This 177-nucleotide RNA was probed chemically with DMS and 2A3.
The reactions ran in a buffer of 150 mM KOAc, 10 mM MgCl2 and 150 mM bicine (pH 8.5), at 24 C.
[RMDB]
RNA sequence: GGGAACGACUCGAGUAGAGUCGAAAAGAUAUGGAAACCCACGACCGAAGAACUAUGUCGGAAACGACAUAGGGAGGUCGGUGGUGUUUCCUAAGUCAAAACGUACGUUCGUUCGCGAACGUACGAACACGUAUAUUUAGUUCGCUAAAUAUACGUGAAAAGAAACAACAACAACAAC
Reactivity to DMS in 0.01 (KOAc 150mM, MgCl2 10mM, bicine 150mM(pH8.5), 24C), signal-to-noise 9, nucleotides 027 to 126: g010a060u000a300u010g000g000a000a010a010c010c000c010a040c010g010a010c000c000g000a100a140g010a190a260c010u000a000u000g010u000c000g010g000a110a100a240c000g010a010c000a010u000a000g000g000g000a050g010g020u000c000g010g030u000g010g000u010g010u000u000u000c000c000u000a010a090g000u000c040a080a050a120a220c020g010u000a010c000g010u000u000c000g010u000u010c280g020c010g000a010a010c000g010u000a000c000g000a060a130
Reactivity to 2A3 in 0.01 (KOAc 150mM, MgCl2 10mM, bicine 150mM(pH8.5), 24C), signal-to-noise 6, nucleotides 027 to 126: g010a010u070a020u140g000g000a010a010a000c010c000c010a020c020g020a010c000c020g270a300a050g000a040a020c000u000a000u010g010u000c000g020g000a060a060a040c010g000a000c000a000u000a000g010g000g010a010g000g020u030c110g000g020u040g000g020u240g010u020u010u000c000c000u000a080a010g050u010c040a020a040a100a150c030g000u010a000c000g000u000u000c000g000u030u060c280g000c010g180a000a000c000g000u000a000c000g000a010a000